[RMDB]
RNA sequence: GGGAACGACUCGAGUAGAGUCGAAAAUGGAAACCUCUGUAACCGCCUUUCCCCCUCUUAUCUUCCAGUGAAAAGUGGGACUGGUAUUUGCUCUGAUCUUGGUGACGCCGGACAGUAGUGUCAGCACGGACAGUGCACUUUUCGAAGUGCACUGUCCAAAAGAAACAACAACAACAAC
Reactivity to DMS in 0.01 (KOAc 150mM, MgCl2 10mM, bicine 150mM(pH8.5), 24C), signal-to-noise 1, nucleotides 027 to 126: u000g010g000a120a140a100c080c040u010c060u000g000u010a050a150c050c060g000c010c050u000u010u000c020c000c000c020c070u030c030u000u000a040u000c050u010u000c050c080a070g010u000g010a060a070a070a070g010u010g010g010g030a050c040u000g000g010u010a090u010u000u000g010c080u000c010u000g020a070u000c050u010u010g040g010u000g010a070c110g000c020c010g010g010a040c080a050g040u010a040g010u000g000u010c050a050g020c080a080c180